Record summary: An RNA of 177 nucleotides, treated with DMS and read out base by base. Values cover nucleotides 27 to 126. The data come from the RNA Mapping Database (RMDB), library TTRINS. Reactivities are rounded to 0.1 and cut off at 0 and 3. DMS adducts were read by reverse transcription with MarathonRT. The DMS profile rests on 3,247 reads.
[RMDB]
RNA sequence: GGGAACGACUCGAGUAGAGUCGAAAAGAUAUGGAAUCACGCCCGCUUCGUGUGUAGGGAGCUCGAUUGUGUCGGAAACGACAUAGAGAGCGAGGAUCUACCACGAAGCGGGCGUGAUUCCUAAGUCCAAUUACACAUCGUUCGCGAUGUGUAAUUGAAAAGAAACAACAACAACAAC
Reactivity to DMS in 0.01 (KOAc 150mM, MgCl2 10mM, bicine 150mM(pH8.5), 24C), signal-to-noise 2, nucleotides 027 to 126: g000a120u010a300u020g000g000a020a020u000c000a000c000g010c000c000c000g010c010u000u000c000g020u000g000u040g020u010a000g010g000g000a040g020c010u010c000g030a300u020u020g020u000g040u000c000g020g000a090a130a290c000g000a020c000a000u000a010g010a300g000a030g030c020g000a090g000g000a050u010c020u010a000c020c000a000c000g000a010a010g020c030g000g000g040c000g010u000g010a000u000u000c010c010u000a000a060g010u000c030
The RNA was probed in 150 mM KOAc, 10 mM MgCl2 and 150 mM bicine (pH 8.5) at 24 C.